Chemical mapping of a 177-nucleotide RNA with 2A3 and DMS. The DMS profile rests on 2,702 reads. Reactivities are given for positions 27 through 126. It was measured as part of the RMDB library OK1LIB.
RNA sequence: GGGAACGACUCGAGUAGAGUCGAAAAGAAGAGAAUAUCGGUGUAAGUGCAGCCCGUCUUACACCGUAAGGCACAGCGGAAACGCUGAUGUAAAAUACAGGGCUGGGAGACGGAAGUAGACCGUCAAACGUACCUAGCAUUUCGAUGCUAGGUACGUAAAAGAAACAACAACAACAAC
Reactivity to 2A3 in 0.01 (KOAc 150mM, MgCl2 10mM, bicine 150mM(pH8.5), 24C), signal-to-noise 4, nucleotides 027 to 126: g150a060a010g090a000g020a080a070u070a060u200c000g000g000u000g000u000a020a040g010u000g120c030a010g030c000c000c010g000u000c000u000u000a000c000a000c000c000g000u050a050a050g110g000c000a000c010a010g000c000g000g000a030a060a020c030g000c010u000g000a030u000g000u050a030a020a040a020u210a050c120a080g000g000g000c010u000g020g020g020a160g000a000c000g010g030a140a080g070u130a030g070a150c000c000g020u000c040a040a040
Reactivity to DMS in 0.01 (KOAc 150mM, MgCl2 10mM, bicine 150mM(pH8.5), 24C), signal-to-noise 2, nucleotides 027 to 126: g000a120a060g000a190g020a150a160u100a080u040c020g010g000u000g040u000a000a000g010u000g030c040a000g000c000c010c000g000u030c010u030u010a020c000a000c000c000g010u000a020a030g010g020c080a040c070a000g030c040g000g000a150a080a120c000g010c010u000g000a090u020g010u010a070a110a050a080u020a110c120a170g000g000g020c020u000g000g000g000a100g000a000c020g000g000a040a070g000u040a040g000a100c000c000g000u000c000a030a040